The record gives the reactivity of an RNA of 177 nucleotides to 2A3 and DMS.
It was measured as part of the RMDB libraries RFM100 and RFMREP.
The RNA was probed in 150 mM KOAc, 10 mM MgCl2 and 150 mM bicine (pH 8.5) at 24 C.
RNA sequence: GGGAACGACUCGAGUAGAGUCGAAAAGAAACUGUUGAGGCUGCCGAGCCAGGAGCGGAUGGCCGGGUGGCUGCGGGCCUUCUGCAGGUCCACCACGUUCUGACCCAGCAGCGUGGUCACGUGGCAACACAUCUAAUCCGUUCGCGGAUUAGAUGUGAAAAGAAACAACAACAACAAC
Reactivity to 2A3 in 0.01 (KOAc 150mM, MgCl2 10mM, bicine 150mM(pH8.5), 24C), signal-to-noise 5, nucleotides 027 to 126: g030a010a070a010c060u040g020u080u060g020a030g010g020c010u030g020c000c030g040a040g000c000c000a020g030g070a080g070c090g080g070a110u040g070g020c020c030g070g020g010u030g030g000c000u040g030c030g010g010g000c020c010u090u090c080u130g040c050a000g010g000u010c000c000a010c020c010a000c010g040u170u070c070u120g050a030c020c000c010a040g090c060a000g030c070g100u120g010g000u000c000a010c060g030u030g010g000c010a080a040
Reactivity to DMS in 0.01 (KOAc 150mM, MgCl2 10mM, bicine 150mM(pH8.5), 24C), signal-to-noise 4, nucleotides 027 to 126: g020a080a060a090c080u010g020u000u010g010a160g000g000c010u000g000c030c030g000a110g000c000c010a040g010g000a070g000c080g000g000a110u000g000g000c040c030g010g020g050u010g010g020c010u000g020c080g020g010g010c010c010u010u010c090u060g000c070a040g000g010u000c010c020a150c020c010a020c010g000u020u020c100u000g000a100c000c000c020a130g000c140a060g000c080g020u010g010g000u000c070a040c050g000u010g000g010c110a080a110